[RMDB]
RNA sequence: GGGAACGACUCGAGUAGAGUCGAAAAGGUGGCUCCAACUGAGCACAGUUGUCUGCUGACAAGGAGUCACCGAUUUAGCAUGUUCGUCCUACGCAGAACCGUCUGACGGUGUAGGACGUUCAUGCGAGGGAUCGAGUACCUUCGGGUAUUCGAUCCCAAAAGAAACAACAACAACAAC
Reactivity to DMS in 0.01 (KOAc 150mM, MgCl2 10mM, bicine 150mM(pH8.5), 24C), signal-to-noise 7, nucleotides 027 to 126: g010g020u000g010g010c000u010c000c010a080a300c300u020g020a040g010c020a020c070a200g010u010u030g000u030c190u000g010c010u010g010a130c100a090a280g000g000a000g010u010c000a000c000c000g000a040u030u010u030a100g010c000a010u000g000u000u000c000g000u000c010c000u000a000c000g010c160a150g040a170a090c030c030g000u000c140u030g010a050c020g000g010u000g000u000a020g000g000a000c010g010u000u000c000a000u000g000c000g000a110
Reactivity to 2A3 in 0.01 (KOAc 150mM, MgCl2 10mM, bicine 150mM(pH8.5), 24C), signal-to-noise 9, nucleotides 027 to 126: g000g000u000g000g000c000u000c000c010a070a090c110u140g030a010g050c020a020c050a110g130u190u160g080u140c070u050g030c020u030g050a060c030a080a120g000g000a000g000u000c000a000c000c000g000a000u000u010u050a010g000c000a000u000g000u000u010c000g000u000c000c000u000a000c020g020c070a070g090a260a070c010c010g080u110c280u300g120a110c020g010g000u050g000u010a000g000g000a000c000g000u000u000c000a000u000g000c000g000a120

Background
The record gives the reactivity of an RNA of 177 nucleotides to DMS and 2A3. Conditions: 150 mM KOAc, 10 mM MgCl2 and 150 mM bicine (pH 8.5), 24 C. The data come from the RNA Mapping Database (RMDB), library OK1LIB. 2A3 adducts were read by reverse transcription with SuperScript II with manganese.